RNA sequence: GGGAACGACUCGAGUAGAGUCGAAAAGCAAUUGCCAGCGGGAAAGGUGCCCGGUACGAAUCCUGGGGUCGUCGCUGUACUCGUGCGAGUAAUCCACGAUGCUACAAGGCGCUAAGCAAUGGAAGUGAUUCUUGAGGGAAGCAAUUCUGCAGAGAUACGAAUAUUAAAUCUUCGGAUUUAAUAUUCGAAAAGAAACAACAACAACAAC
Reactivity to DMS in 0.01 (KOAc 150mM, MgCl2 10mM, bicine 150mM(pH8.5), 24C), signal-to-noise 2, nucleotides 027 to 156: g000c020a080a090u010u000g000c010c010a100g000c070g030g010g000a080a070a090g010g000u010g020c010c010c070g010g010u000a200c080g000a130a130u000c030c020u000g030g020g000g030u000c040g030u000c010g030c100u020g000u000a030c020u000c020g030u010g000c170g000a140g010u000a140a150u000c010c020a050c010g010a040u000g000c010u000a040c010a050a100g030g030c020g040c100u000a030a100g020c090a070a080u010g010g010a080a090g000u010g000a080u010u000c030u000u000g000a140g000g010g010a070a090g020c050a050a080u010u000c010u000g010c050a100g010a190g000a090u000a120
Reactivity to 2A3 in 0.01 (KOAc 150mM, MgCl2 10mM, bicine 150mM(pH8.5), 24C), signal-to-noise 4, nucleotides 027 to 156: g010c010a020a090u120u060g040c000c020a010g020c040g010g020g030a090a090a060g050g020u040g040c010c030c000g030g020u050a050c050g040a040a050u040c020c030u030g010g010g020g040u060c010g020u010c010g000c150u020g000u000a000c010u010c000g020u010g020c150g000a030g020u160a060a140u010c000c000a010c010g030a030u090g020c040u020a000c010a020a030g020g000c000g010c040u120a070a020g030c030a030a110u100g050g020a060a020g050u060g050a070u070u010c030u040u040g030a080g000g030g020a030a010g020c040a030a120u110u040c020u070g010c020a030g030a000g010a100u070a160